[RMDB]
RNA sequence: GGGAACGACUCGAGUAGAGUCGAAAAUUGCGGGCGGUGUCUGCGCGCAGUGCGGCGGUGUUAUCGGUUGCCAUAUAACCCGGCGCAAUCGCGUUUACGUUAAUAUUGUACUGCGACAGCUCUGUCAGAUGCAUUAGGGAUUCGUCCCUAAUGCAUCAAAAGAAACAACAACAACAAC
Reactivity to DMS in 0.01 (KOAc 150mM, MgCl2 10mM, bicine 150mM(pH8.5), 24C), signal-to-noise 5, nucleotides 027 to 126: u010u000g020c110g000g000g020c000g000g000u000g000u010c020u000g010c080g020c010g000c090a040g020u010g030c020g000g010c050g010g010u010g010u000u000a030u000c120g010g020u010u000g020c080c080a100u010a060u010a050a080c040c030c040g010g010c040g010c000a060a040u000c080g010c090g010u000u010u000a040c080g020u000u000a080a110u000a120u000u010g010u000a040c050u000g010c010g000a100c040a050g000c040u000c030u010g010u000c070a130
Reactivity to 2A3 in 0.01 (KOAc 150mM, MgCl2 10mM, bicine 150mM(pH8.5), 24C), signal-to-noise 2, nucleotides 027 to 126: u130u130g070c070g020g000g010c030g050g010u030g030u050c010u010g010c070g000c000g000c150a000g010u020g010c010g060g040c020g020g000u150g020u130u050a070u040c020g020g070u090u100g080c060c050a030u070a000u010a160a060c020c010c000g070g000c040g000c010a000a060u060c060g010c020g040u070u100u070a030c020g020u030u100a140a040u110a180u160u170g040u030a030c020u010g000c010g000a020c010a010g010c010u000c020u030g020u040c040a040

This 177-nucleotide RNA was probed chemically with DMS and 2A3.
For DMS the reverse transcriptase was MarathonRT.